[RMDB]
RNA sequence: GGGAACGACUCGAGUAGAGUCGAAAAGAUAUGGACAACUGGCAGCGCGAAACUAUCGGUCGGAAACGACCGAAUAGGAGCUGCAGUUGUCCUAAGUCAAACGAAAAGGACUUCGGUCCUUUUCGAAUCUUACAGUGGAGUUCGCUCCACUGUAAGAAAAAGAAACAACAACAACAAC
Reactivity to DMS in 0.01 (KOAc 150mM, MgCl2 10mM, bicine 150mM(pH8.5), 24C), signal-to-noise 2, nucleotides 027 to 126: g000a030u000a000u000g000g010a010c000a010a000c010u000g030g040c000a000g050c010g010c260g010a140a070a050c010u000a010u000c010g000g030u000c000g000g010a010a000a020c000g030a000c000c000g000a020a000u000a000g020g000a020g010c000u000g020c010a000g000u000u000g010u000c000c010u000a000a060g000u000c000a130a150a240c030g000a010a000a020a000g000g000a030c010u010u010c250g030g000u010c000c010u000u000u000u000c000g000a070a060
Reactivity to 2A3 in 0.01 (KOAc 150mM, MgCl2 10mM, bicine 150mM(pH8.5), 24C), signal-to-noise 2, nucleotides 027 to 126: g000a000u000a000u060g000g000a000c010a010a020c010u080g300g130c000a010g000c000g000c060g210a190a040a000c010u000a000u010c020g000g010u000c000g010g000a000a010a000c010g000a010c030c010g010a000a000u010a000g000g010a040g000c000u000g000c010a000g000u000u000g000u000c000c000u000a000a000g000u010c010a000a080a050c020g000a000a010a000a050g020g020a000c010u070u200c300g180g000u010c000c000u000u000u000u000c000g000a000a030